Record summary:
Chemical mapping of a 177-nucleotide RNA with DMS. It was measured as part of the RMDB library TTRINS.
RNA sequence: GGGAACGACUCGAGUAGAGUCGAAAAGAUAUGGAUGCAGGGAGACCGUACCAGACUUUUGACGAAUUAUCAGUCGGAAACGACUGUAAGAUUCGAUAAGUCUGACGGUCUCCCUGCAUCCUAAGUCCAAGGGUGAAUACUUCGGUAUUCACCCUUGAAAAGAAACAACAACAACAAC
Reactivity to DMS in 0.01 (KOAc 150mM, MgCl2 10mM, bicine 150mM(pH8.5), 24C), signal-to-noise 1, nucleotides 027 to 126: g000a170u000a300u000g010g000a030u000g010c010a020g040g050g030a000g000a020c000c000g040u010a110c300c000a010g000a010c010u000u000u010u020g020a300c200g010a010a000u010u000a300u010c000a000g010u000c000g000g030a130a080a170c000g000a030c010u010g000u000a090a170g000a030u000u020c000g010a140u010a010a030g000u000c000u000g010a040c000g010g000u000c000u000c000c000c000u000g000c000a010u010c000c000u000a010a070g030u010c020
DMS adducts were read by reverse transcription with MarathonRT. The RNA was probed in 150 mM KOAc, 10 mM MgCl2 and 150 mM bicine (pH 8.5) at 24 C.